[RMDB]
RNA sequence: GGGAACGACUCGAGUAGAGUCGAAAAUGUAAGGGUGUGACGAGCCUAGAUAGGUACUUAACCUCUAAUUCGAUAAGCCGUCAGUGUCCGAUAGGGUACUGAUUGUGAUGACGACUAGAAAGUCAGCGGAGAUGUAACGCUUCGGCGUUACAUCUCCAAAAGAAACAACAACAACAAC
Reactivity to 2A3 in 0.01 (KOAc 150mM, MgCl2 10mM, bicine 150mM(pH8.5), 24C), signal-to-noise 1, nucleotides 027 to 126: u210g020u130a040a170g080g020g040u040g010u000g090a000c010g000a000g000c000c000u030a040g110a130u280a070g050g000u080a130c040u110u050a070a000c000c000u100c000u000a040a050u100u020c010g030a100u010a100a040g010c000c000g010u010c000a000g000u000g000u000c000c010g030a150u190a300g020g000g000u000a000c000u010g000a020u010u040g080u040g000a000u070g020a000c010g000a000c000u010a030g140a040a060a010g000u000c000a000g020c120

Chemical mapping of a 177-nucleotide RNA with 2A3. Conditions: 150 mM KOAc, 10 mM MgCl2 and 150 mM bicine (pH 8.5), 24 C. Reactivities are rounded to 0.1 and cut off at 0 and 3. 2A3 adducts were read by reverse transcription with SuperScript II with manganese.